[RMDB]
Description: Conditions: 150 mM KOAc, 10 mM MgCl2 and 150 mM bicine (pH 8.5), 24 C. Chemical mapping of a 177-nucleotide RNA with DMS and 2A3. For 2A3, 7,370 sequencing reads were counted. It was measured as part of the RMDB library TTRINS.
RNA sequence: GGGAACGACUCGAGUAGAGUCGAAAAGAUAUGGACAGGCUACCCACCUGCCCAUACCGAAGAACCACAGUACUCUCGGAAACGAGAGUACUGUGGGGAGGUAUGUGGCAGAGGCCUGUCCUAAGUCCUAAUUAUAGCUGUUCGCAGCUAUAAUUAGAAAAGAAACAACAACAACAAC
Reactivity to DMS in 0.01 (KOAc 150mM, MgCl2 10mM, bicine 150mM(pH8.5), 24C), signal-to-noise 4, nucleotides 027 to 126: g010a140u000a140u000g010g010a020c000a000g000g000c000u010a180c050c020c050a300c110c000u000g000c000c000c000a000u000a000c000c000g000a150a210g020a190a160c000c010a010c000a010g010u000a000c000u010c000u000c000g010g000a130a140a160c010g000a020g010a000g020u000a000c000u000g010u000g000g000g000g000a030g020g000u010a000u000g010u030g010g000c000a010g000a050g020g000c000c000u000g010u000c000c000u000a010a100g010u010c100
Reactivity to 2A3 in 0.01 (KOAc 150mM, MgCl2 10mM, bicine 150mM(pH8.5), 24C), signal-to-noise 1, nucleotides 027 to 126: g060a110u270a190u300g010g000a010c000a000g010g000c010u110a300c040c030c020a010c010c010u000g000c000c010c000a010u010a000c000c010g220a300a040g010a070a030c000c000a000c000a000g020u010a010c000u010c010u000c020g000g080a150a150a040c010g000a000g000a000g010u000a000c000u000g010u000g000g000g000g000a000g010g030u010a010u020g140u300g010g010c010a010g010a010g000g000c010c010u010g000u000c000c000u000a000a000g000u020c000